[RMDB]
RNA sequence: GGGAACGACUCGAGUAGAGUCGAAAAAGAUGUAGGUUCGCCUACAUCUAAAAAACCUUUGUGGGGAGCGAUUAGGUGGUAGGCCCAUUGGGCCUACGUAACAUCCUAAGUCGCAUCGAUCCACUCUGGUAAAAAUACUUUAGUUCGCUAAAGUAAAUCACCUAAAUUAGUUCGCUAAUUUAGGUGAAAAAGAAACAACAACAACAAC
Reactivity to DMS in 0.01 (KOAc 150mM, MgCl2 10mM, bicine 150mM(pH8.5), 24C), signal-to-noise 2, nucleotides 027 to 156: a080g000a030u000g030u000a020g000g010u000u010c300g030c030c000u000a000c010a000u030c000u000a000a020a070a100a050a060c010c000u000u000u000g020u000g000g000g000g010a060g030c000g010a080u000u000a010g050g020u000g040g020u000a010g010g030c000c010c000a300u010u010g110g030g000c010c010u000a000c010g010u000a020a040c140a060u000c010c000u000a030a040g030u000c010g020c010a130u000c160g000a090u000c000c010a030c000u000c040u000g030g010u000a000a070a080a180a150u000a020c000u000u000u000a000g020u000u000c300g030c020u000a000a010a020g000u000a000a060a150
Reactivity to 2A3 in 0.01 (KOAc 150mM, MgCl2 10mM, bicine 150mM(pH8.5), 24C), signal-to-noise 4, nucleotides 027 to 156: a010g010a000u010g000u000a000g010g040u010u060c200g080c030c000u000a000c000a000u000c000u000a000a010a000a000a000a000c010c000u020u010u010g020u010g000g010g010g020a020g000c000g000a010u010u010a000g000g000u020g010g000u000a000g010g000c000c000c090a250u160u260g010g000g000c000c000u000a000c000g000u000a010a000c010a160u140c000c000u020a050a080g200u050c000g000c000a030u250c010g020a020u000c010c000a010c000u000c010u010g000g000u050a080a050a070a020a030u050a030c010u020u000u010a010g030u030u040c290g030c110u010a000a000a010g020u050a030a070a050

An RNA of 207 nucleotides, treated with DMS and 2A3 and read out base by base. The RNA was probed in 150 mM KOAc, 10 mM MgCl2 and 150 mM bicine (pH 8.5) at 24 C.